[RMDB]
Description:
The record gives the reactivity of an RNA of 207 nucleotides to DMS and 2A3. For 2A3, 1,090 sequencing reads were counted.

RNA sequence: GGGAACGACUCGAGUAGAGUCGAAAAUGGAAGUAUGGGUUUCGACCCAUACUUCCAACAGCGGUGCCGGAAGGUUAAUUGAUGGGGUUAGCGCAAGCGAAGCUCUUGAUCGAAGCCCCGGUUAGUAUCACGCGACAUAUUCGUAUGUCGCGUGAUAUCAGGUUAUUUCUUUCGAGAAAUAACCUGAAAAAGAAACAACAACAACAAC
Reactivity to DMS in 0.01 (KOAc 150mM, MgCl2 10mM, bicine 150mM(pH8.5), 24C), signal-to-noise 1, nucleotides 027 to 156: u030g020g010a040a020g020u000a030u000g000g000g000u000u000u000c280g000a110c000c000c010a010u000a070c010u000u000c010c000a000a030c030a100g030c010g030g030u020g040c020c000g000g010a070a100g010g010u000u000a040a230u000u000g020a260u000g010g020g060g000u010u000a300g020c040g010c300a100a160g000c030g000a140a190g000c010u010c000u000u000g030a210u000c040g000a300a080g000c000c000c050c020g030g010u010u010a100g040u010a020u000c000a000c000g040c010g010a010c000a010u000a030u000u000c300g020u000a030u000g010u020c010g020c000g020u010g010a010u000a010
Reactivity to 2A3 in 0.01 (KOAc 150mM, MgCl2 10mM, bicine 150mM(pH8.5), 24C), signal-to-noise 2, nucleotides 027 to 156: u110g000g010a000a010g010u000a000u020g000g000g000u070u090u230c230g030a020c000c000c000a000u000a000c000u000u000c000c000a000a000c000a000g020c050g070g080u070g010c000c000g020g010a120a090g070g000u030u070a210a080u160u050g020a030u050g000g010g000g020u250u000a020g030c000g000c040a090a030g010c010g010a030a000g020c000u000c000u060u100g070a040u000c030g020a050a000g000c000c010c000c020g000g000u030u110a020g020u020a000u000c000a000c020g000c000g010a000c020a000u010a020u030u080c120g070u050a020u000g000u000c010g000c000g000u000g000a000u000a000
In probing experiments dimethyl sulfate is read out at A N1 and C N3, which are open when not base-paired.